[RMDB]
RNA sequence: GGGAACGACUCGAGUAGAGUCGAAAAGAUAUGGAAUCGUUGUGUGAUCAACAGCAUAGCUCGGAAACGAGCUAUGACAUGAUUCCACACUGCGAUUCCUAAGUCAAAAGACGGCUUCGGCCGUCAAGCAUCUUUGAAAGUUCGCUUUCAAAGAUGCAAAAGAAACAACAACAACAAC
Reactivity to 2A3 in 0.01 (KOAc 150mM, MgCl2 10mM, bicine 150mM(pH8.5), 24C), signal-to-noise 2, nucleotides 027 to 126: g020a030u080a010u130g000g010a000a010u000c000g000u020u050g020u020g000u020g020a060u160c080a080a250c020a120g030c000a010u000a000g000c000u000c000g030g000a090a040a030c010g000a000g020c010u000a000u000g000a000c000a060u080g010a050u300u080c190c000a000c010a000c000u000g000c000g010a010u010u000c000c000u000a020a010g020u000c020a000a030a050a190g010a000c010g000g000c010u090u100c230g200g000c030c000g020u000c020a000a010
Reactivity to DMS in 0.01 (KOAc 150mM, MgCl2 10mM, bicine 150mM(pH8.5), 24C), signal-to-noise 3, nucleotides 027 to 126: g000a070u000a300u000g000g000a040a000u000c000g020u000u000g000u000g020u000g010a130u000c060a020a150c210a190g010c010a010u000a000g010c000u000c000g000g010a110a090a260c020g000a000g000c000u000a000u000g000a080c090a190u000g000a050u000u000c150c040a000c010a000c020u000g000c010g000a030u000u000c000c000u000a000a080g020u010c050a130a080a120a160g010a010c010g000g000c000u000u000c220g030g000c000c000g020u000c000a020a120